[RMDB]
RNA sequence: GGGAACGACUCGAGUAGAGUCGAAAAAUGGUCUGAUAUUAUCAGUCUGUAUUUAUGGAGAGGACCUUCAACACACUCACGAUUUAUGGUUAAUCUCACUUUUGACAGCAUGAUAAAUCUUAGUGUCCUACACAACAACCUUCUUGAAGACCAGUGACAUAUCCCAUAGUUUCGACUAUGGGAUAUGAAAAGAAACAACAACAACAAC
Reactivity to DMS in 0.01 (KOAc 150mM, MgCl2 10mM, bicine 150mM(pH8.5), 24C), signal-to-noise 5, nucleotides 027 to 156: a080u000g020g010u010c020u000g010a140u000a150u000u000a060u000c020a080g000u000c000u000g020u000a080u000u000u000a090u020g010g000a070g020a130g020g000a090c030c020u000u000c070a080a120c060a080c050a100c080u010c070a050c090g020a140u000u000u000a060u010g020g020u000u000a090a100u000c020u000c030a080c070u000u000u000u000g010a050c030a040g010c070a120u000g010a060u000a020a030a060u000c020u000u000a070g010u000g020u000c040c030u000a110c130a070c040a050a080c050a060a070c030c000u000u010c040u000u000g010a100a080g010a030c010c010a050g000u010g010a200
Reactivity to 2A3 in 0.01 (KOAc 150mM, MgCl2 10mM, bicine 150mM(pH8.5), 24C), signal-to-noise 9, nucleotides 027 to 156: a000u040g000g010u010c020u020g030a010u070a130u160u050a030u030c010a010g120u020c010u020g030u030a160u040u160u030a140u180g030g010a030g000a020g040g030a010c010c000u060u060c100a120a050c050a010c020a030c090u140c060a090c110g110a130u020u080u090a080u120g040g000u030u080a150a150u030c010u010c010a160c070u050u080u050u110g050a010c000a010g020c030a080u050g010a010u040a020a040a030u020c020u040u060a050g010u010g020u070c020c040u110a040c050a010c000a100a090c020a030a050c020c010u090u110c040u070u150g050a030a010g010a020c000c010a010g020u030g080a000
Record summary
The data come from the RNA Mapping Database (RMDB), library OK3TST. This 207-nucleotide RNA was probed chemically with DMS and 2A3. Reactivities are given for positions 27 through 156. The 2A3 profile rests on 14,159 reads. 2A3 adducts were read by reverse transcription with SuperScript II with manganese. Conditions: 150 mM KOAc, 10 mM MgCl2 and 150 mM bicine (pH 8.5), 24 C.